[RMDB]
The record gives the reactivity of an RNA of 177 nucleotides to 2A3 and DMS.
For DMS, 1,450 sequencing reads were counted.
For 2A3 the reverse transcriptase was SuperScript II with manganese.
Conditions: 150 mM KOAc, 10 mM MgCl2 and 150 mM bicine (pH 8.5), 24 C.
RNA sequence: GGGAACGACUCGAGUAGAGUCGAAAAACACGAUGGAAGCAUCGGCAACAUAGCUGGAGGCGGCCGGGUUGAAGGUGAAGAUGCCCUGCGCCCAGUUCAUGAACUUGACCAUUUCGCCGCCAUCGAACGCUGCGAUAUAGUUCGCUAUAUCGCAGCGAAAAGAAACAACAACAACAAC
Reactivity to 2A3 in 0.01 (KOAc 150mM, MgCl2 10mM, bicine 150mM(pH8.5), 24C), signal-to-noise 2, nucleotides 027 to 126: a000c070a000c000g000a000u010g000g010a000a050g030c010a030u020c030g010g000c000a010a000c000a060u030a000g030c020u010g060g050a270g300g300c130g090g010c010c040g010g000g020u000u030g050a090a000g030g140u240g090a050a010g000a030u080g000c000c000c000u010g000c000g010c000c000c000a000g020u010u030c060a000u010g020a060a040c050u140u060g080a300c000c000a050u090u100u040c070g000c010c000g000c000c010a020u010c010g000a090a020
Reactivity to DMS in 0.01 (KOAc 150mM, MgCl2 10mM, bicine 150mM(pH8.5), 24C), signal-to-noise 2, nucleotides 027 to 126: a140c110a180c040g000a010u000g010g000a070a110g010c010a060u000c060g000g000c010a050a070c020a000u010a020g000c030u000g000g020a130g000g060c030g010g030c030c140g000g020g020u000u020g000a080a030g000g020u000g010a070a060g020a150u010g010c000c000c000u000g020c040g020c010c000c000a040g010u000u000c090a010u000g030a080a090c200u000u000g010a100c010c030a200u000u000u000c210g020c010c170g040c010c000a040u000c030g050a060a120